[RMDB]
RNA sequence: GGGAACGACUCGAGUAGAGUCGAAAAGGAGGACGAAGCAUAUUUCUGUUUCUGGAGGAUUAUUUAUAAUCUGCCGGAAAGUCUUGCAGGUGGCUGGGCUAUGUUCAGUCUGGUAGAAUUAAGCACGAAAACGUGUCCUUGUUCGCAAGGACACGAAGUAUUUAACAAGCUUCGGCUUGUUAAAUACAAAAGAAACAACAACAACAAC
Reactivity to 2A3 in 0.01 (KOAc 150mM, MgCl2 10mM, bicine 150mM(pH8.5), 24C), signal-to-noise 3, nucleotides 027 to 156: g040g010a020g010g010a030c040g010a020a010g030c040a050u080a110u130u150u090c050u030g100u040u030u000c030u020g000g030a030g040g000a000u010u020a010u020u250u020a070u030a030a010u000c000u030g050c020c010g010g030a020a040a010g030u010c050u060u100g020c030a020g000g060u040g040g000c010u010g010g010g000c000u060a010u130g020u050u060c020a010g010u020c030u030g050g000u040a010g060a070a050u130u170a100a010g050c040a010c090g070a040a040a040a050c000g010u000g000u020c000c000u020u000g020u030u070c160g010c130a010a010g010g000a020c000a000c000g000a000a000
Reactivity to DMS in 0.01 (KOAc 150mM, MgCl2 10mM, bicine 150mM(pH8.5), 24C), signal-to-noise 1, nucleotides 027 to 156: g000g020a090g040g010a070c030g020a080a080g020c060a130u000a110u000u010u000c010u010g010u000u000u000c000u000g020g000a040g000g010a040u000u000a050u000u000u000a090u000a060a030u010c020u000g010c000c010g010g000a020a020a080g030u000c000u010u000g020c050a080g030g000u000g030g020c020u010g010g000g060c060u020a030u010g000u010u000c030a080g000u000c020u000g010g020u010a080g010a090a100u000u020a070a140g060c030a090c080g030a080a080a090a160c010g020u000g020u000c000c000u000u010g010u000u010c300g040c050a000a000g020g010a020c010a000c000g010a000a070